[RMDB]
RNA sequence: GGGAACGACUCGAGUAGAGUCGAAAAAACUCAGCUAGGGAGACUAUAACAUUCAUGUUGACGAGACCUAGACGAAACACAGAGGAAAAUUAUUAAUCACUGGAUAGUAUUAGUAAUGACUCUGUGUAAAACUCUUCUACGUUCGCGUAGAAGAGAAGAUAUUGGAAUAGUUCGCUAUUCCAAUAUCAAAAGAAACAACAACAACAAC
Reactivity to DMS in 0.01 (KOAc 150mM, MgCl2 10mM, bicine 150mM(pH8.5), 24C), signal-to-noise 2, nucleotides 027 to 156: a060a050c030u000c020a080g030c010u000a000g010g000g010a110g000a180c070u000a120u000a070a070c040a140u010u000c080a100u000g040u000u010g000a120c050g010a250g000a070c000c010u000a030g010a130c060g000a130a110a040c000a020c000a000g020a020g030g010a070a060a080a010u000u000a020u000u000a010a020u000c060a040c030u000g000g020a160u000a060g000u000a060u000u000a020g020u000a010a010u000g000a150c000u000c000u000g020u000g010u000a010a030a040a120c010u000c000u020u010c000u010a010c000g010u000u010c300g040c020g050u000a010g010a010a010g000a000g040a020a080
Reactivity to 2A3 in 0.01 (KOAc 150mM, MgCl2 10mM, bicine 150mM(pH8.5), 24C), signal-to-noise 6, nucleotides 027 to 156: a000a000c010u010c000a010g000c000u010a010g010g030g010a040g050a060c040u100a080u100a300a030c070a080u160u250c090a070u270g020u030u040g070a080c060g010a010g040a070c010c000u010a010g020a050c010g000a020a030a000c000a000c000a000g000a010g010g040a070a190a110a020u000u000a000u000u000a000a010u020c050a010c050u040g090g120a140u280a300g010u000a000u000u000a000g010u010a010a010u010g020a000c000u000c000u000g000u000g000u000a000a000a000a000c010u000c010u000u000c000u000a000c000g020u010u070c290g000c010g100u000a000g000a000a000g000a000g000a000a010